[RMDB]
RNA sequence: GGGAACGACUCGAGUAGAGUCGAAAAGUUUGGUGGAGAACAAGCUGAGUUCUAGUUCUCAUGUCCUCAGAUCACAGAUUUCAGCUGAGUAAGACACUGCAGCCUUUAUGCUUGGCUAAGUCGUCUACCUGGUAUAUCCUUUCGAGGAUAUACCAGGAAAAGAAACAACAACAACAAC
Reactivity to DMS in 0.01 (KOAc 150mM, MgCl2 10mM, bicine 150mM(pH8.5), 24C), signal-to-noise 5, nucleotides 027 to 126: g010u020u010u010g020g020u010g010g000a110g000a090a090c070a100a070g000c040u010g010a080g010u000u010c030u000a130g010u000u010c010u010c060a070u000g010u000c050c030u010c100a070g000a060u010c100a120c150a090g000a070u000u000u000c080a030g010c020u000g000a120g020u000a050a040g010a050c040a050c090u000g010c200a080g010c030c010u000u000u010a080u020g010c100u000u010g000g010c020u000a080a030g000u010c070g020u000c060u000a140
Reactivity to 2A3 in 0.01 (KOAc 150mM, MgCl2 10mM, bicine 150mM(pH8.5), 24C), signal-to-noise 3, nucleotides 027 to 126: g050u080u130u120g060g040u090g030g070a060g000a050a020c030a060a010g030c030u110g060a050g040u070u030c030u050a050g000u050u000c010u020c020a030u100g080u050c010c010u020c020a030g010a100u090c040a030c020a150g060a070u040u110u090c040a050g000c020u000g030a020g090u090a100a020g020a010c010a010c060u080g050c080a000g030c020c010u110u110u110a180u240g090c090u090u030g020g000c000u010a010a000g020u050c050g010u020c040u040a080